Annotation: Conditions: 150 mM KOAc, 10 mM MgCl2 and 150 mM bicine (pH 8.5), 24 C. An RNA of 177 nucleotides, treated with 2A3 and DMS and read out base by base. Reactivities are given for positions 27 through 126.
[RMDB]
RNA sequence: GGGAACGACUCGAGUAGAGUCGAAAAGGGUGAUGGGAAUCGAACCCACAACAUCAGCUUGGAAGGCUGAGGUUUUGCCAUUAAACUACACCCGCUAAUGUAAACGAUUAUGGGGCGGCUGAAGGGGUGAUACUUCCAGUUUCGACUGGAAGUAUCAAAAAGAAACAACAACAACAAC
Reactivity to 2A3 in 0.01 (KOAc 150mM, MgCl2 10mM, bicine 150mM(pH8.5), 24C), signal-to-noise 3, nucleotides 027 to 126: g040g020g010u080g040a130u080g040g020g030a020a130u120c060g010a070a100c010c050c000a000c020a020a000c000a060u030c000a000g000c030u070u100g130g170a230a060g040g000c010u010g000a020g010g000u000u040u080u100g060c020c000a060u100u130a090a080a050c060u130a030c020a020c000c030c000g010c040u090a100a050u170g080u150a100a110a080c050g020a040u070u060a050u270g040g000g030g060c070g030g000c050u060g050a040a010g000g000g000g010
Reactivity to DMS in 0.01 (KOAc 150mM, MgCl2 10mM, bicine 150mM(pH8.5), 24C), signal-to-noise 4, nucleotides 027 to 126: g000g010g010u010g010a090u010g010g010g020a110a100u010c110g010a130a150c030c040c010a090c180a050a030c040a070u000c020a000g020c000u000u000g030g010a170a240g000g000c010u000g020a030g000g010u000u000u000u000g030c060c060a050u000u010a080a070a110c080u000a100c070a070c030c010c030g020c120u010a030a040u020g010u020a070a060a130c210g010a060u000u000a070u000g010g010g000g000c080g010g010c080u000g010a070a070g000g000g000g010
Source: RMDB library OK2TRN, as collected in RNAgym.